[RMDB]
RNA sequence: GGGAACGACUCGAGUAGAGUCGAAAACUGCUAGCCCACACGUGCAUCUCAGGGAGCGCGGGCUUUACCACACGGUGGUGAAACUGCAGAAGCGACGGAGUGUCCUUGAGGCACUGGCCGUGUGCACCGAGGUCGGCUGGUUCGCCGGCCGACUUCGAAAAGAAACAACAACAACAAC
Reactivity to 2A3 in 0.01 (KOAc 150mM, MgCl2 10mM, bicine 150mM(pH8.5), 24C), signal-to-noise 9, nucleotides 027 to 126: c040u050g030c050u060a050g030c010c020c010a020c010a020c040g060u080g020c010a150u020c030u020c060a060g000g010g030a020g000c030g000c000g000g030g000c000u020u010u020a030c000c000a020c020a040c080g180g010u010g000g000u020g020a010a020a010c040u060g000c010a020g010a090a020g020c010g040a030c020g030g030a050g020u050g030u010c000c000u080u170g030a170g010g010c010a010c010u020g090g040c000c000g010u020g040u040g000c010a010c020
Reactivity to DMS in 0.01 (KOAc 150mM, MgCl2 10mM, bicine 150mM(pH8.5), 24C), signal-to-noise 9, nucleotides 027 to 126: c040u010g000c030u010a070g010c050c030c010a100c100a110c150g010u020g010c030a070u020c020u000c050a050g000g010g010a100g010c040g000c060g000g000g000c050u010u010u010a030c020c010a040c010a170c200g010g020u000g010g000u010g000a030a030a070c070u010g000c020a070g000a130a110g000c020g000a060c030g000g010a060g000u000g000u000c000c000u020u010g000a060g010g000c020a010c030u010g000g010c000c010g010u000g020u030g020c040a130c170
Chemical mapping of a 177-nucleotide RNA with 2A3 and DMS. The RNA was probed in 150 mM KOAc, 10 mM MgCl2 and 150 mM bicine (pH 8.5) at 24 C. The data come from the RNA Mapping Database (RMDB), library OK1LIB. Values cover nucleotides 27 to 126.